[RMDB]
RNA sequence: GGGAACGACUCGAGUAGAGUCGAAAAGGCUGCCUUUUGGAGAUGGAAACAGAAAUACUGAAAACCCAAGCGGCUGGGAAUUGCCCCGUUCUUCCAGGUCAUCGUCGGCGGAAUGAUGUUGCCAUCAUUUCAACAGGGCAUUCGUGCCCUGUUGAAAAAAAGAAACAACAACAACAAC
Reactivity to DMS in 0.01 (KOAc 150mM, MgCl2 10mM, bicine 150mM(pH8.5), 24C), signal-to-noise 1, nucleotides 027 to 126: g000g000c030u010g010c010c170u000u000u030u070g030g020a050g000a080u010g000g000a110a040a060c030a030g010a100a150a060u040a110c030u010g000a080a070a160a150c020c030c010a060a080g080c070g000g010c000u020g000g010g060a070a080u020u040g010c030c010c000c000g020u000u040c010u010u010c050c070a070g010g010u000c010a030u000c040g000u050c090g020g010c080g000g000a050a040u010g010a040u000g010u030u020g040c070c050a010u050c030a130
Reactivity to 2A3 in 0.01 (KOAc 150mM, MgCl2 10mM, bicine 150mM(pH8.5), 24C), signal-to-noise 1, nucleotides 027 to 126: g080g000c020u050g000c000c030u120u020u000u120g130g000a150g010a060u060g030g170a050a090a090c000a000g100a100a100a070u150a120c000u030g030a070a050a050a050c000c000c000a020a030g040c030g000g000c000u050g000g000g050a010a080u030u110g020c000c000c050c000g010u000u050c060u020u020c050c040a050g030g080u090c050a080u080c060g070u010c010g030g000c010g010g050a050a040u150g030a100u010g010u080u060g000c020c020a050u030c010a020
Source: RMDB library RFM100, as collected in RNAgym. The record gives the reactivity of an RNA of 177 nucleotides to DMS and 2A3. For 2A3, 482 sequencing reads were counted. For 2A3 the reverse transcriptase was SuperScript II with manganese. Reactivities are given for positions 27 through 126.